[RMDB]
An RNA of 177 nucleotides, treated with DMS and 2A3 and read out base by base. It was measured as part of the RMDB library OK2TST. The reactions ran in a buffer of 150 mM KOAc, 10 mM MgCl2 and 150 mM bicine (pH 8.5), at 24 C. Values are in units of 0.01, from 0 to 300, in steps of 10. For 2A3, 671 sequencing reads were counted. For DMS the reverse transcriptase was MarathonRT. For 2A3 the reverse transcriptase was SuperScript II with manganese.
RNA sequence: GGGAACGACUCGAGUAGAGUCGAAAAUGUCUUAUUUGCCUCUUGCGGAGCUCUUUCUAUCAUGUUUAAAGUCUAUCUAUGGGAUCAAAGCCUUAAGCUUGCAUCAAACAUAACCUUAAGCAAAGACCACUGGAAUGUGUUUCGACACAUUCCAGUGAAAAGAAACAACAACAACAAC
Reactivity to DMS in 0.01 (KOAc 150mM, MgCl2 10mM, bicine 150mM(pH8.5), 24C), signal-to-noise 1, nucleotides 027 to 126: u000g000u000c040u010u010a090u010u010u000g010c020c020u000c090u010u000g020c120g000g000a160g010c080u010c040u020u010u000c040u000a120u000c050a080u000g010u000u000u000a050a040a090g010u000c050u000a080u010c060u000a100u000g000g000g000a080u010c100a030a080a080g000c020c120u020u010a100a140g010c030u000u000g010c110a030u000c030a050a060a060c110a100u000a020a070c050c000u010u010a070a060g020c020a080a070a110g000a100c150
Reactivity to 2A3 in 0.01 (KOAc 150mM, MgCl2 10mM, bicine 150mM(pH8.5), 24C), signal-to-noise 1, nucleotides 027 to 126: u040g030u000c000u010u130a160u010u110u060g040c000c000u050c010u070u030g080c050g170g020a020g040c020u020c070u110u070u050c010u160a150u120c050a090u030g070u110u130u050a070a020a000g010u010c030u020a130u000c010u020a070u110g010g000g030a020u030c030a050a060a000g010c040c020u100u160a070a020g000c000u000u000g000c010a050u040c040a010a050a160c000a000u030a020a040c010c000u090u070a060a000g000c000a070a100a050g050a050c000